Conditions: 150 mM KOAc, 10 mM MgCl2 and 150 mM bicine (pH 8.5), 24 C.
Structure probing data (DMS and 2A3) for a 177-nucleotide construct.
2A3 adducts were read by reverse transcription with SuperScript II with manganese.
For DMS the reverse transcriptase was MarathonRT.
For DMS, 626 sequencing reads were counted.
It was measured as part of the RMDB library OK2TRN.
RNA sequence: GGGAACGACUCGAGUAGAGUCGAAAAGAUCGCGAUCUGAUCCGACAUGCAUGACAUGCUGCGUCUAGUCUCAGUACACUAGCGUACUCGAUCCCAUGAUGCACGAUGAUCGUACGAUCACACGCUAUCUCGAUCUGUGCUUCGGCACAGAUCGAGAAAAAGAAACAACAACAACAAC
Reactivity to DMS in 0.01 (KOAc 150mM, MgCl2 10mM, bicine 150mM(pH8.5), 24C), signal-to-noise 1, nucleotides 027 to 126: g000a010u000c010g050c030g000a020u000c040u000g000a080u010c060c020g030a100c050a000u000g030c040a010u010g000a300c070a140u000g010c180u010g020c000g020u000c000u000a000g000u010c040u000c100a180g000u000a160c270a010c040u040a010g000c060g000u000a000c010u000c060g000a090u000c120c090c040a050u000g000a030u010g010c010a120c070g010a100u000g000a000u010c010g000u000a070c090g000a020u000c030a120c260a150c080g000c120u000a080
Reactivity to 2A3 in 0.01 (KOAc 150mM, MgCl2 10mM, bicine 150mM(pH8.5), 24C), signal-to-noise 1, nucleotides 027 to 126: g000a010u050c030g000c000g000a010u000c020u120g080a110u010c070c020g050a040c070a050u130g090c010a000u070g110a090c010a040u090g000c030u000g000c050g040u050c000u000a020g040u020c050u020c210a070g110u130a070c010a010c100u080a040g020c000g020u020a020c050u020c110g040a100u050c110c030c000a010u050g010a040u010g040c080a010c060g080a120u020g000a000u000c010g040u070a110c100g020a000u010c000a000c000a040c000g050c040u090a100